[RMDB]
RNA sequence: GGGAACGACUCGAGUAGAGUCGAAAAAAAGAUAUGGACGUGACCCAGAUUCAACAGGUACGAAGAACACUAAUCGGAAACGAUUAGUGGGAGUACCUGCGCAUUUCUGGUCACGUCCUAAGUCAAAGACUAUUAUCACCUUCGGGUGAUAAUAGUCAAAAGAAACAACAACAACAAC
Reactivity to 2A3 in 0.01 (KOAc 150mM, MgCl2 10mM, bicine 150mM(pH8.5), 24C), signal-to-noise 2, nucleotides 027 to 126: a000a010a030g070a030u060a030u080g020g000a000c000g000u010g000a020c130c180c030a000g020a050u240u180c080a040a030c010a020g000g000u010a010c000g180a300a100g000a080a000c030a000c010u000a000a000u000c000g000g020a030a040a010c010g000a000u000u000a010g000u020g000g000g000a030g000u010a000c000c000u010g020c010g000c020a210u090u190u060c010u000g030g010u030c000a000c000g020u000c000c000u000a000a010g010u000c010a070a050a030
Reactivity to DMS in 0.01 (KOAc 150mM, MgCl2 10mM, bicine 150mM(pH8.5), 24C), signal-to-noise 2, nucleotides 027 to 126: a050a050a050g000a000u000a140u000g000g000a010c000g030u000g000a040c160c030c080a020g000a030u000u010c300a230a030c000a010g020g010u000a000c010g000a110a130g030a150a220c010a000c000u000a000a000u000c020g000g010a070a060a060c000g000a010u000u000a000g000u010g000g000g010a120g010u000a000c000c000u000g010c050g000c240a250u010u000u020c000u000g000g020u000c000a000c010g000u010c000c000u000a000a050g020u010c010a080a090a120
The data come from the RNA Mapping Database (RMDB), library TTRDES. Structure probing data (2A3 and DMS) for a 177-nucleotide construct. 2A3 is a SHAPE reagent: it acylates the 2'-hydroxyl of flexible nucleotides of all four kinds.